Notes
This 170-nucleotide RNA was probed chemically with DMS and 2A3. DMS adducts were read by reverse transcription with MarathonRT. For 2A3, 2,796 sequencing reads were counted. The reactions ran in a buffer of 150 mM KOAc, 10 mM MgCl2 and 150 mM bicine (pH 8.5), at 24 C. The data come from the RNA Mapping Database (RMDB), library 15KLIB.
RNA sequence: GGGAACGACUCGAGUAGAGUCGAAAAGCGUUAGCAUUGUGCAGUGGUGUAAUGUGGUUGUACACUUAUAGCAUUGGAGAAGCCUCAAGCCCCAUUGCCUAUCUGGUUUUUGUCACUACACUCACUAUAACCUGGACCUUCGGGUCCAGGAAAAGAAACAACAACAACAAC
Reactivity to DMS in 0.01 (KOAc 150mM, MgCl2 10mM, bicine 150mM(pH8.5), 24C), signal-to-noise 1, nucleotides 027 to 129: g010c000g020u030u000a090g030c040a160u140u030g050u020g100c060a020g010u000g010g000u000g040u000a090a070u000g000u010g010g010u000u050g040u030a070c150a050c080u000u000a040u000a010g010c070a030u080u000g040g000a000g040a170a100g140c020c060u070c260a200a090g050c020c000c000c010a090u010u020g000c090c070u010a020u000c140u050g000g030u000u000u000u000u000g000u070c030a070c150u020a060c030a090c030u030c020a140c070u030a090u000a110a090
Reactivity to 2A3 in 0.01 (KOAc 150mM, MgCl2 10mM, bicine 150mM(pH8.5), 24C), signal-to-noise 2, nucleotides 027 to 129: g050c040g030u020u030a000g000c000a020u080u180g030u020g150c010a000g000u000g000g090u030g030u010a080a090u160g050u060g040g040u000u000g030u040a020c040a040c070u050u090a000u010a010g030c050a050u030u030g020g000a200g010a210a030g030c010c020u120c000a010a060g000c000c010c000c000a040u000u020g000c000c000u000a050u000c060u050g000g000u030u030u000u130u090g080u000c000a000c030u010a000c030a000c000u090c000a060c030u050a020u060a180a010